[RMDB]
RNA sequence: GGGAACGACUCGAGUAGAGUCGAAAAGUAGAAGCAAUUCGUUGCUUCUACCUGGCGGCGUUAGUCCAUCUGGUUAAGACACUGGCCUGCCACGCCAGCGUCCCGGGUUCAAAUCCCGGACGCCGCACCAACGUGACGGCGGCUUCGGCCGCCGUCAGCAUGAAACCAUAUUCGUAUGGUUUCAUGCAAAAGAAACAACAACAACAAC
Reactivity to 2A3 in 0.01 (KOAc 150mM, MgCl2 10mM, bicine 150mM(pH8.5), 24C), signal-to-noise 2, nucleotides 027 to 156: g000u000a000g000a000a000g000c000a000a010u090u090c210g090u130u010g000c000u010u010c000u010a000c000c020u020g110g000c000g000g000c010g010u020u140a040g060u100c060c030a210u100c190u200g140g000u130u110a080a030g010a000c010a000c020u010g000g020c000c020u080g060c080c000a010c040g000c000c000a010g000c020g010u010c000c030c040g000g000g000u040u040c040a030a020a010u050c000c000c010g000g000a000c010g000c000c000g000c010a020c020c010a020a060c040g010u030g010a000c000g000g000c000g000g000c000u020u020c080g050g000c000c000g000c060c000g000u000c000a000

Structure probing data (2A3) for a 207-nucleotide construct.
The data come from the RNA Mapping Database (RMDB), library ARCHII.
For 2A3 the reverse transcriptase was SuperScript II with manganese.